[RMDB]
RNA sequence: GGGAACGACUCGAGUAGAGUCGAAAACAUGGCCUAGGGAAGUAACCUCCAUUGCACUUAGGAGGGGUGCUUUCCUAAGGUCUGCCCAAGUGGCAGAGCCUACGUCAUAAUUUGUGGUAGUGGGGGCCGUUUAAGAUCCUUUCGAGGAUCUUAAACGAAAAGAAACAACAACAACAAC
Reactivity to 2A3 in 0.01 (KOAc 150mM, MgCl2 10mM, bicine 150mM(pH8.5), 24C), signal-to-noise 4, nucleotides 027 to 126: c040a050u150g000g010c000c000u010a010g010g000g010a020a000g000u030a050a070c000c000u050c010c010a070u080u300g100c130a090c220u160u230a080g010g020a030g000g020g020g060u110g000c000u010u000u010c000c000u010a010a020g000g000u000c000u010g010c010c000c000a070a030g110u210g040g000c040a030g010a060g160c010c010u020a020c020g020u010c070a040u020a270a290u110u130u280g060u030g040g030u020a190g030u110g000g020g000g050g050c020
Reactivity to DMS in 0.01 (KOAc 150mM, MgCl2 10mM, bicine 150mM(pH8.5), 24C), signal-to-noise 6, nucleotides 027 to 126: c150a040u030g010g010c000c070u010a020g000g010g000a000a010g010u010a160a110c000c000u000c000c000a170u020u020g000c220a090c230u030u020a160g020g010a020g000g010g000g030u020g010c000u000u000u010c000c000u000a010a030g000g010u000c000u000g000c000c020c010a120a100g010u030g000g000c010a060g020a140g010c030c000u000a030c080g000u010c010a030u010a120a130u020u040u020g030u010g010g000u000a060g020u000g000g000g000g000g000c080